RNA sequence: GGGAACGACUCGAGUAGAGUCGAAAAAAUGAUGGAUGGUAACCAUCAGUUUAUUAUAAGGGAAUAAAUCUGCUUUACUUUAUGCAUAUGACUGUAUUUAGUAGGGAAACCUUGGCCUAGCGAUCCCAAUUACAUUCAUUAUGUAUUGGGUGAUUGAGAGAACAACAAACUUCGGUUUGUUGUUCUCAAAAGAAACAACAACAACAAC
Reactivity to 2A3 in 0.01 (KOAc 150mM, MgCl2 10mM, bicine 150mM(pH8.5), 24C), signal-to-noise 1, nucleotides 027 to 156: a000a030u010g000a000u010g010g000a020u100g060g080u040a050a040c000c010a000u020c000a020g000u130u060u050a120u070u050a230u070a120a020g050g020g060a070a040u140a090a040a060u070c090u090g010c000u070u060u010a010c030u030u030u030a020u040g010c030a050u090a140u300g130a150c090u030g010u020a010u030u040u030a030g010u010a010g000g000g040a000a040a050c030c000u020u090g110g040c010c010u000a030g100c010g040a030u050c000c000c000a000a000u110u030a000c000a000u010u130c010a010u010u160a020u130g000u010a010u000u010g010g000g010u010g040a020u030u050g110a090
Reactivity to DMS in 0.01 (KOAc 150mM, MgCl2 10mM, bicine 150mM(pH8.5), 24C), signal-to-noise 1, nucleotides 027 to 156: a080a010u010g000a020u000g000g010a110u000g030g010u000a190a150c020c000a000u010c010a070g010u000u000u010a050u020u000a170u010a120a030g000g000g010a070a110u000a040a100a070u020c080u000g020c000u000u000u000a000c040u020u010u000a040u020g010c050a040u000a130u000g010a110c180u020g020u010a020u010u000u020a040g030u010a010g000g000g010a110a100a050c020c020u000u000g010g000c000c000u010a090g000c050g000a170u000c000c010c000a010a030u000u010a010c010a020u000u000c250a150u000u010a050u010g000u000a010u000u000g020g020g020u000g000a170u010u000g000a300
An RNA of 207 nucleotides, treated with 2A3 and DMS and read out base by base. For 2A3 the reverse transcriptase was SuperScript II with manganese. For 2A3, 902 sequencing reads were counted.